Description:
Chemical mapping of a 177-nucleotide RNA with 2A3 and DMS. For DMS, 3,573 sequencing reads were counted. Source: RMDB library TTRDEL, as collected in RNAgym.
[RMDB]
RNA sequence: GGGAACGACUCGAGUAGAGUCGAAAAGAUAUGGAGAGGUGGGAGCGAAGAACAUAUGGCUUGUCGGAAACGAUCGUCAUAUGGGAGCUCCGCUCUCCUAAGUCAAAGGGCGAGUUCGCUCGCCCAACUAAUCAUGCCAGUUCGCUGGCAUGAUUAGAAAAGAAACAACAACAACAAC
Reactivity to 2A3 in 0.01 (KOAc 150mM, MgCl2 10mM, bicine 150mM(pH8.5), 24C), signal-to-noise 4, nucleotides 027 to 126: g020a020u040a020u070g030g010a010g010a030g110g300u300g270g100g020a010g000c030g080a300a070g010a130a030c020a010u020a010u020g030g000c040u140u300g150u210c020g010g010a040a010a030c000g020a040u120c070g030u000c000a000u020a010u020g010g000g000a000g020c000u010c000c000g030c000u000c010u000c000c000u000a030a010g010u000c070a120a070a070g000g030g010c000g010a010g020u050u160c200g150c120u000c000g000c010c000c000a000a000
Reactivity to DMS in 0.01 (KOAc 150mM, MgCl2 10mM, bicine 150mM(pH8.5), 24C), signal-to-noise 4, nucleotides 027 to 126: g020a030u000a270u000g000g010a030g000a010g000g050u010g060g030g010a020g020c010g030a080a150g000a130a110c000a030u000a010u000g010g010c010u010u010g020u000c010g010g000a070a080a110c000g010a030u000c300g000u000c000a000u000a000u000g010g000g000a070g000c000u000c000c000g010c010u000c000u000c000c000u000a000a030g000u010c040a050a100a150g000g010g000c020g000a040g000u010u010c190g020c000u000c020g010c000c000c020a000a050